This 207-nucleotide RNA was probed chemically with DMS and 2A3.
Reactivities are given for positions 27 through 156.
DMS adducts were read by reverse transcription with MarathonRT.
The reactions ran in a buffer of 150 mM KOAc, 10 mM MgCl2 and 150 mM bicine (pH 8.5), at 24 C.
The data come from the RNA Mapping Database (RMDB), library OK3TST.
RNA sequence: GGGAACGACUCGAGUAGAGUCGAAAAUUCAAGCCUUUAGCUCCACAGUCACAGGCACAGUGAGCAAGUGGGUGACUAGUGCCAAGGCUGCCACGGAGCUUAGACUGAAGAGGAGAAAGGGGCAAGGAUGGAGAAGGGAAUAUAACAGCUCUCAAAAAUUUUACGUCGUAUUCGUACGACGUAAAAUAAAAGAAACAACAACAACAAC
Reactivity to DMS in 0.01 (KOAc 150mM, MgCl2 10mM, bicine 150mM(pH8.5), 24C), signal-to-noise 2, nucleotides 027 to 156: u030u010c040a120a110g010c000c010u020u000u000a030g030c010u000c010c030a300c020a030g030u000c000a070c090a300g030g000c020a050c030a120g020u000g010a190g000c050a130a090g030u000g000g040g090u000g000a130c050u000a070g040u000g020c010c000a110a190g000g000c000u010g000c050c080a090c160g010g020a060g050c000u000u000a020g000a030c010u010g030a130a110g000a170g020g030a100g020a030a090a090g000g000g020g000c010a030a050g000g050a100u000g010g000a070g020a070a050g000g000g010a040a050u000a080u020a090a140c060a040g030c010u000c000u010c020a040a070a040a140
Reactivity to 2A3 in 0.01 (KOAc 150mM, MgCl2 10mM, bicine 150mM(pH8.5), 24C), signal-to-noise 5, nucleotides 027 to 156: u110u060c040a070a010g010c020c000u120u120u090a010g000c000u000c000c000a020c010a030g000u020c020a100c080a170g010g020c010a000c010a000g050u080g120a120g100c080a160a120g130u170g080g120g010u070g030a030c010u050a080g010u010g010c010c010a060a050g010g000c000u010g060c090c040a080c100g010g010a000g000c000u000u000a000g000a000c000u010g050a090a020g010a040g090g030a030g050a050a090a030g030g000g010g020c030a020a030g040g020a050u070g030g000a030g020a050a020g040g000g010a060a020u140a010u030a140a050c040a050g040c020u020c020u030c070a070a080a100a010